An RNA of 177 nucleotides, treated with 2A3 and DMS and read out base by base. For DMS, 10,816 sequencing reads were counted.
RNA sequence: GGGAACGACUCGAGUAGAGUCGAAAACCGCUUUGCCGCAUCGUUGAUGAUGGUGUUCCAUUCAUUGCUCAGCAGCAAAAGCUGAUGCAGCGGAGCGGAUUUAAAACUCUGAGCGCGUGCUUCCCAGAGUAUAGUCACGAUUCGUCGUGACUAUACUAAAAGAAACAACAACAACAAC
Reactivity to 2A3 in 0.01 (KOAc 150mM, MgCl2 10mM, bicine 150mM(pH8.5), 24C), signal-to-noise 9, nucleotides 027 to 126: c000c000g000c000u010u010u010g010c010c010g000c010a020u040c080g120u090u150g040a040u020g000a010u010g010g070u180g210u210u170c020c010a030u070u190c010a020u020u060g010c020u050c120a090g000c020a020g020c040a100a080a060a050g010c020u030g000a010u030g000c000a000g000c000g000g000a000g000c000g000g000a000u010u030u030a020a030a010a010c010u000c020u040g060a060g050c070g000c010g040u050g090c070u020u010c000c000c010a020g030
Reactivity to DMS in 0.01 (KOAc 150mM, MgCl2 10mM, bicine 150mM(pH8.5), 24C), signal-to-noise 4, nucleotides 027 to 126: c010c000g000c000u000u010u020g010c020c030g020c000a000u010c050g010u040u010g010a100u000g000a030u000g000g010u020g000u030u050c020c040a020u020u000c060a070u000u000g020c040u010c120a060g000c070a080g040c170a070a050a120a080g020c030u010g010a010u000g020c010a040g010c010g000g010a010g010c000g000g000a030u000u020u000a050a090a130a020c040u000c020u000g020a060g010c030g020c080g000u000g010c150u010u010c020c000c000a190g000
Conditions: 150 mM KOAc, 10 mM MgCl2 and 150 mM bicine (pH 8.5), 24 C.